RNA sequence: GGGAACGACUCGAGUAGAGUCGAAAAAGCAACGAGUGUGUGUGGGACGUUUUAUCCCAAGCUCUGAGUAGAGCACGGGCUCACACACACCGCGAGCGAGCAUCAGCAGAGCGCAAACGCUGGUAAACGAGGGGUAAGUGUUCGCACUUACCCCUCGAAAAGAAACAACAACAACAAC
Reactivity to DMS in 0.01 (KOAc 150mM, MgCl2 10mM, bicine 150mM(pH8.5), 24C), signal-to-noise 2, nucleotides 027 to 126: a120g010c020a150a010c030g000a290g020u000g020u000g030u000g040u000g000g010g000a170c070g030u010u010u040u000a140u000c000c010c030a170a260g000c000u000c000u000g000a170g030u010a070g000a000g040c010a080c120g000g010g000c000u010c000a000c020a000c000a030c020a000c030c020g000c030g020a180g000c030g000a140g010c070a120u000c010a020g000c030a070g000a070g020c090g050c060a060a060a100c190g000c000u000g010g030u030a050a090a140
Reactivity to 2A3 in 0.01 (KOAc 150mM, MgCl2 10mM, bicine 150mM(pH8.5), 24C), signal-to-noise 1, nucleotides 027 to 126: a000g050c040a040a030c030g010a130g050u000g000u000g000u000g000u010g010g010g020a000c020g040u010u080u100u290a220u160c040c010c000a000a040g040c010u000c000u050g240a210g110u300a010g160a000g010c000a010c000g000g150g000c000u010c020a010c020a000c000a010c000a010c000c000g040c010g000a000g020c010g030a040g010c000a040u070c000a000g000c000a030g030a020g170c050g040c050a090a050a050c100g000c010u020g080g000u040a030a030a100